[RMDB]
RNA sequence: GGGAACGACUCGAGUAGAGUCGAAAAGAUAUGGAUGGUGCUGGUCCGAGGAUCUGGCCGGUCGGAAACGACCGCCAGGGAGGACCCACCAUCCUAAGUCAAAGAAUGGUGACUUCGGUCACCAUUCGUAAGCUGAGCACUUCGGUGCUCAGCUUACAAAAGAAACAACAACAACAAC
Reactivity to DMS in 0.01 (KOAc 150mM, MgCl2 10mM, bicine 150mM(pH8.5), 24C), signal-to-noise 2, nucleotides 027 to 126: g000a000u000a090u020g000g000a000u000g010g010u000g020c300u010g030g010u000c000c000g010a050g000g000a000u010c000u000g020g030c050c230g000g050u000c000g000g000a030a020a020c000g000a000c020c020g000c010c000a000g000g000g000a000g010g030a010c000c000c000a000c000c010a020u000c000c000u000a000a090g010u000c000a220a130a190g000a030a020u000g000g010u010g000a050c000u000u010c190g020g010u000c000a000c010c000a000u000u000c000
The data come from the RNA Mapping Database (RMDB), library TTRDES. Structure probing data (DMS) for a 177-nucleotide construct. The RNA was probed in 150 mM KOAc, 10 mM MgCl2 and 150 mM bicine (pH 8.5) at 24 C. DMS adducts were read by reverse transcription with MarathonRT. The DMS profile rests on 1,343 reads.